[RMDB]
RNA sequence: GGGAACGACUCGAGUAGAGUCGAAAAGAUAUGGAGUGAGGUAGCUGCGAAACGAAGAACGGUUAUUAUAUCGGAAACGAUAUAAUAACCGGGAGUUUCGAACUACAGUUUCCUCACUCCUAAGUCACCCUAUUACAACGUUCGCGUUGUAAUAGGGAAAAGAAACAACAACAACAAC
Reactivity to 2A3 in 0.01 (KOAc 150mM, MgCl2 10mM, bicine 150mM(pH8.5), 24C), signal-to-noise 2, nucleotides 027 to 126: g010a000u020a020u060g020g020a010g020u000g010a000g030g010u030a010g000c020u030g040c010g010a010a010a010c020g060a130a160g280a300a130c020g000g000u000u010a010u000u010a010u000a000u010c000g000g030a030a010a000c000g000a000u000a000u010a010a030u010a030a010c000c000g000g000g030a040g000u000u010u000c000g000a040a010c050u290a060c070a000g010u020u040u010c000c000u010c000a000c000u000c000c000u000a000a000g000u000c000a110
Reactivity to DMS in 0.01 (KOAc 150mM, MgCl2 10mM, bicine 150mM(pH8.5), 24C), signal-to-noise 1, nucleotides 027 to 126: g000a010u000a160u020g000g000a030g020u000g010a030g000g020u000a020g000c000u000g020c020g020a010a010a020c000g000a160a210g040a160a210c040g010g000u000u000a030u000u010a010u010a000u010c000g010g010a040a000a060c000g010a010u000a000u000a000a000u010a000a000c010c000g000g000g010a160g000u000u000u000c010g000a070a030c110u010a300c000a030g010u000u000u000c000c000u000c000a000c010u000c000c000u000a000a070g020u000c020a280

Structure probing data (2A3 and DMS) for a 177-nucleotide construct. Conditions: 150 mM KOAc, 10 mM MgCl2 and 150 mM bicine (pH 8.5), 24 C.